[RMDB]
An RNA of 177 nucleotides, treated with 2A3 and DMS and read out base by base. It was measured as part of the RMDB library OK2TST. The 2A3 profile rests on 2,191 reads.
RNA sequence: GGGAACGACUCGAGUAGAGUCGAAAACAAUAGUCGAACGUGCCGGCUGGCCCGAAUAGGAGCGCGCCGAAAACGACGAGUCCUAACACGCCCCAUAUGAAUAUCUUCAGCCCAAUGUGCAUGGCUCCCAUCUACUCGUUUUCGAACGAGUAGAUGGAAAAGAAACAACAACAACAAC
Reactivity to 2A3 in 0.01 (KOAc 150mM, MgCl2 10mM, bicine 150mM(pH8.5), 24C), signal-to-noise 3, nucleotides 027 to 126: c030a010a160u090a120g100u070c020g020a020a000c030g010u030g030c040c010g030g000c040u040g050g020c000c030c030g040a120a140u250a240g030g020a130g040c090g000c000g070c020c010g000a040a050a010a010c020g020a000c010g000a010g080u020c020c010u050a080a030c040a010c110g040c000c010c000c040a020u050a050u190g070a080a010u110a030u190c080u120u030c070a060g010c040c020c000a060a090u110g030u050g080c070a050u000g050g000c050u050c020
Reactivity to DMS in 0.01 (KOAc 150mM, MgCl2 10mM, bicine 150mM(pH8.5), 24C), signal-to-noise 3, nucleotides 027 to 126: c170a100a120u010a110g010u000c010g000a090a090c050g000u000g000c070c010g000g030c010u000g010g010c010c000c000g010a120a120u000a100g000g000a090g020c030g040c140g020c000c010g010a050a050a040a070c020g010a160c000g020a040g020u000c050c030u000a060a130c050a110c110g010c070c010c030c060a120u010a040u020g000a070a060u000a050u000c030u010u000c040a080g000c010c030c070a100a050u010g000u000g010c080a080u000g020g000c050u010c100